RNA sequence: GGGAACGACUCGAGUAGAGUCGAAAAUUUCAAGGCACAGAUUAAGUACAAGGUCAGGCUCUUGCUGUCGUUGGAGAAUCCGGUUGGGGUAGGAGCUAAAUCUCAGGACCACUUGCUCUAUAUAUGAGUGCCAAGAUAAUCUAGAGCAGGGAGAGGCUAUCCAACCUUAGUUCGCUAAGGUUGGAUAAAAAGAAACAACAACAACAAC
Reactivity to DMS in 0.01 (KOAc 150mM, MgCl2 10mM, bicine 150mM(pH8.5), 24C), signal-to-noise 1, nucleotides 027 to 156: u010u010u000c040a030a180g000g030c040a010c060a190g010a160u000u000a050a070g020u010a050c060a060a070g040g010u000c040a140g000g050c070u000c030u000u000g020c040u020g050u000c030g020u000u020g010g000a230g020a100a140u000c020c000g050g000u000u010g020g020g010g000u000a030g020g010a030g010c000u000a040a060a100u000c000u010c060a080g020g020a060c010c010a050c040u000u000g010c030u000c000u000a090u000a250u000a190u020g020a050g000u000g010c020c020a090a070g000a110u000a110a140u010c090u000a030g000a020g030c000a080g000g000g010a160g010a090g000g010c110
Reactivity to 2A3 in 0.01 (KOAc 150mM, MgCl2 10mM, bicine 150mM(pH8.5), 24C), signal-to-noise 2, nucleotides 027 to 156: u020u050u010c020a020a050g010g020c000a000c000a040g100a060u100u170a110a030g020u060a070c050a150a000g010g040u000c010a030g000g030c000u000c010u030u050g000c000u030g110u120c040g030u040u070g000g020a090g040a080a120u020c050c010g110g000u050u160g050g020g000g030u020a040g000g040a010g030c000u050a060a170a150u030c070u040c060a040g120g040a050c010c010a010c070u020u010g000c010u000c010u050a000u010a050u000a020u290g090a020g020u010g020c010c010a000a000g030a010u100a070a060u030c050u090a030g000a000g040c000a010g020g000g020a070g000a010g030g000c030
An RNA of 207 nucleotides, treated with DMS and 2A3 and read out base by base. For DMS, 1,975 sequencing reads were counted. Source: RMDB library OK3TST, as collected in RNAgym. For DMS the reverse transcriptase was MarathonRT. The reactions ran in a buffer of 150 mM KOAc, 10 mM MgCl2 and 150 mM bicine (pH 8.5), at 24 C.